[RMDB]
The record gives the reactivity of an RNA of 177 nucleotides to 2A3 and DMS. Reactivities are given for positions 27 through 126. Source: RMDB library RFMREP, as collected in RNAgym. Conditions: 150 mM KOAc, 10 mM MgCl2 and 150 mM bicine (pH 8.5), 24 C. Values are in units of 0.01, from 0 to 300, in steps of 10.

RNA sequence: GGGAACGACUCGAGUAGAGUCGAAAACUGAAUCUCACUGCAGCUGCUGGACGCUGCACAAGAUUAGAUAUUUUAGAACUCUUGUGCGUGUGACAGCGGCUAUUGUGGGUAUUCUUAUUCAACAAUACAACUAUUUCUUCUUCGGAAGAAAUAGUUGAAAAGAAACAACAACAACAAC
Reactivity to 2A3 in 0.01 (KOAc 150mM, MgCl2 10mM, bicine 150mM(pH8.5), 24C), signal-to-noise 3, nucleotides 027 to 126: c000u000g000a000a010u000c010u000c000a000c010u020g030c030a010g000c000u010g010c000u020g000g020a050c020g010c060u150g000c000a000c000a000a000g000a010u100u080a040g080a060u110a200u150u300u140u080a100g040a070a030c020u000c000u000u000g000u000g000c040g020u020g010u030g070a080c000a010g000c000g000g000c000u000a000u000u010g000u000g000g000g030u060a010u020u000c010u040u120a180u150u140c020a040a050c020a080a050u110a160
Reactivity to DMS in 0.01 (KOAc 150mM, MgCl2 10mM, bicine 150mM(pH8.5), 24C), signal-to-noise 2, nucleotides 027 to 126: c100u020g020a010a010u000c000u000c010a010c020u000g010c100a010g010c000u010g000c010u000g000g000a070c020g020c000u000g010c000a000c020a010a010g000a050u000u010a090g000a190u010a110u020u010u010u010a150g020a080a160c200u010c000u000u000g010u000g010c030g030u000g010u000g000a150c010a010g010c000g010g010c000u000a000u000u000g030u000g010g010g000u000a000u000u000c000u010u010a080u010u010c140a050a070c130a080a100u000a150